The data come from the RNA Mapping Database (RMDB), libraries RFM100 and RFMREP. Structure probing data (2A3 and DMS) for a 177-nucleotide construct. The reactions ran in a buffer of 150 mM KOAc, 10 mM MgCl2 and 150 mM bicine (pH 8.5), at 24 C.
RNA sequence: GGGAACGACUCGAGUAGAGUCGAAAAAAACUCACAGUGACAAAGAGACAGAGUAGGGUUCUAGGCCCCUGUUCCUGGGGACUUGAAGGCGGUUUUACAUACUGGUCAGACACGGCUGGAGGCCAAGUAUUGUGUACUCAUUCGUGAGUACACAAUAAAAAGAAACAACAACAACAAC
Reactivity to 2A3 in 0.01 (KOAc 150mM, MgCl2 10mM, bicine 150mM(pH8.5), 24C), signal-to-noise 5, nucleotides 027 to 126: a000a000a000c050u050c000a090c020a050g080u100g140a030c070a070a200a010g070a030g020a020c010a030g040a030g040u110a030g050g020g000u060u020c020u040a040g010g070c000c000c000c010u040g060u100u050c020c020u050g000g010g010g030a040c010u040u070g040a030a030g030g000c030g020g010u010u060u040u060a040c020a010u100a090c020u050g010g030u030c020a010g020a070c030a010c080g030g000c010u020g030g020a020g010g030c010c000a020a000g060
Reactivity to DMS in 0.01 (KOAc 150mM, MgCl2 10mM, bicine 150mM(pH8.5), 24C), signal-to-noise 9, nucleotides 027 to 126: a030a040a050c040u010c010a100c090a070g020u010g010a100c100a070a070a070g010a110g010a060c070a030g010a080g000u010a060g000g000g020u000u000c050u000a070g010g000c020c010c010c010u020g010u000u010c040c030u000g010g010g010g000a070c080u010u000g000a060a050g010g010c070g010g010u010u010u010u020a080c130a090u030a080c050u010g000g020u010c040a070g010a100c110a080c100g000g000c030u000g010g010a080g000g010c040c060a060a060g010